Chemical mapping of a 177-nucleotide RNA with 2A3 and DMS. 2A3 adducts were read by reverse transcription with SuperScript II with manganese. DMS adducts were read by reverse transcription with MarathonRT. The reactions ran in a buffer of 150 mM KOAc, 10 mM MgCl2 and 150 mM bicine (pH 8.5), at 24 C. For 2A3, 3,572 sequencing reads were counted. The data come from the RNA Mapping Database (RMDB), library 15KREP.

RNA sequence: GGGAACGACUCGAGUAGAGUCGAAAAUAAGUCUCUUUGCUACUUUAAUGACUUUUUCUGGUAAUGUAGAUCUUGAUGCGUUAGCUAGUGAUAUUUUUGACACUCCUAGCGUACUUCAAGCUACUCUCUAUCGAAAUGAGUUCGCUCAUUUCGAUAGAAAAGAAACAACAACAACAAC
Reactivity to 2A3 in 0.01 (KOAc 150mM, MgCl2 10mM, bicine 150mM(pH8.5), 24C), signal-to-noise 3, nucleotides 027 to 126: u080a020a000g010u010c010u030c000u100u110u080g040c020u020a100c040u160u090u180a130a110u140g040a050c000u040u070u010u040u080c050u080g130g040u150a140a110u160g010u000a010g010a050u050c010u000u020g000a000u020g000c010g010u010u000a000g010c060u010a010g020u000g040a080u050a130u240u220u070u110u150g030a010c000a010c010u000c000c000u000a000g000c000g000u010a020c020u010u020c000a010a000g010c000u010a010c020u000c000u000
Reactivity to DMS in 0.01 (KOAc 150mM, MgCl2 10mM, bicine 150mM(pH8.5), 24C), signal-to-noise 1, nucleotides 027 to 126: u000a010a070g020u000c010u000c180u000u000u010g010c050u000a030c120u000u010u000a090a040u010g030a080c050u000u000u000u000u000c010u000g000g030u010a070a060u000g020u010a000g000a130u000c010u000u010g000a010u000g000c010g000u000u010a000g000c130u000a020g020u000g020a120u010a060u000u010u000u000u000g020a160c020a020c000u010c300c000u000a030g010c000g030u000a020c090u000u020c000a000a010g010c020u000a000c000u000c100u010